[RMDB]
RNA sequence: GGGAACGACUCGAGUAGAGUCGAAAAAAACGCUGGGUCGUGCAUGGACUUCACCGAAAGCAACAGCAUCCUGAAGCGCGCACGGGAUGACAUGCUUGUUGAAGUUCUGUGAUGCGACCUGUGCUGAAGCGCGCACGGCAACCGAAAGGUGCGAAAAGUUACUAUGGUGGUUCGCCACCAUAGUAACAAAAGAAACAACAACAACAAC
Reactivity to 2A3 in 0.01 (KOAc 150mM, MgCl2 10mM, bicine 150mM(pH8.5), 24C), signal-to-noise 6, nucleotides 027 to 156: a000a000a010c020g000c010u010g000g000g000u000c000g000u010g030c000a020u010g000g000a000c000u000u000c020a020c070c120g230a290a090a010g010c060a060a100c090a180g030c000a000u000c000c010u040g050a180a060g010c000g000c000g000c010a000c010g010g000g000a000u000g050a060c130a200u300g010c000u020u100g020u010u030g010a000a000g030u170u020c010u010g020u010g030a280u070g010c000g000a000c000c000u000g000u010g000c000u010g000a130a030g000c000g000c000g000c000a010c000g010g000c000a000a010c010c000g050a100a040a020g020g000u020g000c000g010a040a070a030a040
Reactivity to DMS in 0.01 (KOAc 150mM, MgCl2 10mM, bicine 150mM(pH8.5), 24C), signal-to-noise 2, nucleotides 027 to 156: a080a070a060c040g030c050u000g000g020g030u000c000g000u000g000c070a070u010g030g000a090c020u000u020c030a140c100c080g030a150a030a070g040c020a080a040c080a110g050c000a020u000c010c000u010g000a030a040g020c020g060c020g000c000a300c030g030g000g020a040u020g000a130c030a280u000g020c020u010u000g030u000u000g000a080a050g000u010u000c010u000g040u000g010a130u000g030c000g030a020c000c000u020g000u000g020c000u000g050a040a060g030c010g030c040g000c060a300c080g010g020c020a080a110c000c010g000a070a110a130g000g000u000g000c000g030a050a100a120a240